[RMDB]
RNA sequence: GGGAACGACUCGAGUAGAGUCGAAAAUCGUUCGGCCCAUGAUGCCCGGUGCAAACCGUCGUGGCGGUCGUCCCGCUUCGAGUGCUUUAGCGGCUACGGGUCGCAGCGCGAACUCGGUGAACAAGUACUCAUGCACAGUGUUCGCACUGUGCAUGAGAAAAGAAACAACAACAACAAC
Reactivity to 2A3 in 0.01 (KOAc 150mM, MgCl2 10mM, bicine 150mM(pH8.5), 24C), signal-to-noise 2, nucleotides 027 to 126: u080c000g020u040u020c000g030g000c000c020c020a050u100g060a080u170g000c000c030c010g010g000u040g020c090a110a070a070c020c020g050u030c030g000u020g020g000c030g020g020u060c050g090u060c020c000c000g000c000u030u050c010g040a050g020u050g000c050u120u160u280a080g020c040g050g000c010u040a070c110g070g000g000u010c000g000c000a010g040c010g020c020g030a050a030c010u010c060g100g000u110g040a110a030c060a190a040g080u070a060
Reactivity to DMS in 0.01 (KOAc 150mM, MgCl2 10mM, bicine 150mM(pH8.5), 24C), signal-to-noise 4, nucleotides 027 to 126: u010c070g000u000u010c040g010g000c010c010c010a090u000g010a100u010g010c000c050c020g000g000u000g010c280a070a110a030c030c010g000u000c040g030u000g010g000c000g000g010u000c300g000u020c270c010c010g010c030u000u000c020g000a040g030u000g010c190u000u000u000a100g020c060g000g010c010u010a270c140g000g010g020u010c020g010c090a020g020c050g020c070g010a050a100c020u000c030g030g010u000g000a080a080c160a070a090g010u010a160